[RMDB]
RNA sequence: GGGAACGACUCGAGUAGAGUCGAAAAGCGUACUACCGUAGAGGUUCUUGACAUGAGCUAAGAAUUAGUAUCCCAAAUAGGAUACUAAUUAUUAGCUCAACAGCAAGAACUACCCACCUACGGUAUCGCAAAAGUCGAUUUCUUCGGAAAUCGACAAGUUGUAAUGCUGGUUCGCCAGCAUUACAACAAAAGAAACAACAACAACAAC
Reactivity to 2A3 in 0.01 (KOAc 150mM, MgCl2 10mM, bicine 150mM(pH8.5), 24C), signal-to-noise 3, nucleotides 027 to 156: g000c010g030u100a120c040u010a010c030c000g000u000a000g010a020g010g010u010u010c010u020u050g060a180c010a100u050g010a000g000c000u010a020a000g020a030a000u000u020a000g000u020a000u020c020c040c040a200a230a230u300a100g000g010a000u000a000c000u000a020a000u010u010a000u010u000a000g000c000u000c000a000a010c000a000g010c000a000a000g000a000a000c000u010a010c050c060c040a090c000c000u010a000c000g000g000u010a040u140c010g000c000a050a030a060a030g010u000c000g000a000u020u010u000c020u040u040c240g160g000a010a000a000u010c000g000a000c000a000a010
Reactivity to DMS in 0.01 (KOAc 150mM, MgCl2 10mM, bicine 150mM(pH8.5), 24C), signal-to-noise 1, nucleotides 027 to 156: g030c000g000u000a090c100u000a000c000c010g060u000a010g020a140g030g000u010u020c000u000u010g000a100c120a300u000g000a010g000c000u000a020a010g020a020a020u000u020a020g000u000a000u000c000c000c020a050a100a260u010a060g020g020a000u010a040c000u020a010a000u000u000a000u000u000a000g000c000u000c010a000a030c130a160g000c000a000a020g000a030a020c010u010a020c000c020c010a300c180c000u000a020c020g020g020u010a000u010c060g060c030a080a000a080a210g000u020c000g010a020u000u000u010c010u000u000c300g040g010a020a010a010u030c000g020a000c000a000a060

Structure probing data (2A3 and DMS) for a 207-nucleotide construct.
For DMS the reverse transcriptase was MarathonRT.
For 2A3 the reverse transcriptase was SuperScript II with manganese.
The reactions ran in a buffer of 150 mM KOAc, 10 mM MgCl2 and 150 mM bicine (pH 8.5), at 24 C.
Reactivities are given for positions 27 through 156.
Source: RMDB library RNAMAK, as collected in RNAgym.